[RMDB]
RNA sequence: GGGAACGACUCGAGUAGAGUCGAAAAGCUGGGUGACCCAUUGUAAAGGUGGGUCCGAUCCACGUCUUGUCGCAAAUCAACAAGAAAUUGAUCACCCUGCACGAUGGUUGGCCCUUCGGUCGGCGGGUCAAGGGACGCUCUUCGGGGCGUUCCUUGAAAAAGAAACAACAACAACAAC
Reactivity to DMS in 0.01 (KOAc 150mM, MgCl2 10mM, bicine 150mM(pH8.5), 24C), signal-to-noise 9, nucleotides 027 to 126: g020c050u000g000g010g010u020g010a030c020c010c010a020u000u000g020u040a080a120a150g010g010u000g000g000g010u000c040c170g000a050u020c010c120a070c300g000u010c010u010u000g000u000c060g010c210a090a110a150u040c100a070a010c040a040a030g000a030a060a080u020u010g000a050u000c040a150c030c000c000u010g020c060a100c090g000a060u010g010g020u010u000g010g000c030c010c020u010u020c060g010g010u010c040g010g010c290g000g000g000
Reactivity to 2A3 in 0.01 (KOAc 150mM, MgCl2 10mM, bicine 150mM(pH8.5), 24C), signal-to-noise 9, nucleotides 027 to 126: g040c070u030g000g020g040u080g010a020c000c000c020a010u030u140g150u230a170a140a100g070g000u010g010g000g010u000c020c000g000a020u000c010c020a030c020g040u000c010u010u030g020u020c020g020c130a060a090a180u130c030a030a090c010a020a020g050a040a060a030u070u110g030a040u040c020a040c010c000c020u030g010c070a070c080g070a070u100g080g040u050u060g040g020c000c000c000u030u050c050g040g010u020c020g010g010c030g030g000g020

Source: RMDB library OK1LIB, as collected in RNAgym. Structure probing data (DMS and 2A3) for a 177-nucleotide construct. 2A3 adducts were read by reverse transcription with SuperScript II with manganese. As a SHAPE reagent, 2A3 marks flexible, mostly unpaired nucleotides at the ribose 2'-OH. Conditions: 150 mM KOAc, 10 mM MgCl2 and 150 mM bicine (pH 8.5), 24 C.